RNA sequence: GGGAACGACUCGAGUAGAGUCGAAAACGCGACCUCUUGAAGCGUGGGCGGCAACCGGGUCAAGCGCGAUCACGGUGCCGAGGUCAGCCCUUCUGGGGUGAUGCGGCACGCAAGGCCAUGCCUUGUGACUACUGCUCAUUUUCGAAUGAGCAGUAGUAAAAGAAACAACAACAACAAC
Reactivity to 2A3 in 0.01 (KOAc 150mM, MgCl2 10mM, bicine 150mM(pH8.5), 24C), signal-to-noise 9, nucleotides 027 to 126: c010g000c010g010a020c000c010u020c030u070u140g030a030a000g010c030g050u060g020g070g030c010g000g000c010a040a040c010c000g010g000g000u000c030a070a060g180c120g060c130g140a000u010c020a020c170g010g010u010g000c000c000g000a010g010g090u110c040a080g030c020c020c000u050u040c050u100g010g000g000g000u030g010a100u150g000c010g020g020c070a020c040g000c000a010a000g010g000c030c140a110u270g000c020c000u010u010g010u010g040
Reactivity to DMS in 0.01 (KOAc 150mM, MgCl2 10mM, bicine 150mM(pH8.5), 24C), signal-to-noise 7, nucleotides 027 to 126: c030g020c010g010a070c100c010u000c020u020u020g000a040a050g000c280g010u000g000g020g010c010g010g000c020a030a030c010c020g000g000g010u010c020a120a170g030c180g020c220g000a030u000c020a060c040g000g010u000g000c000c000g000a030g010g010u020c060a140g020c020c060c000u000u000c070u010g000g000g010g010u000g010a080u020g020c000g000g000c120a250c040g010c020a010a010g000g010c010c160a180u030g000c000c000u000u000g000u010g000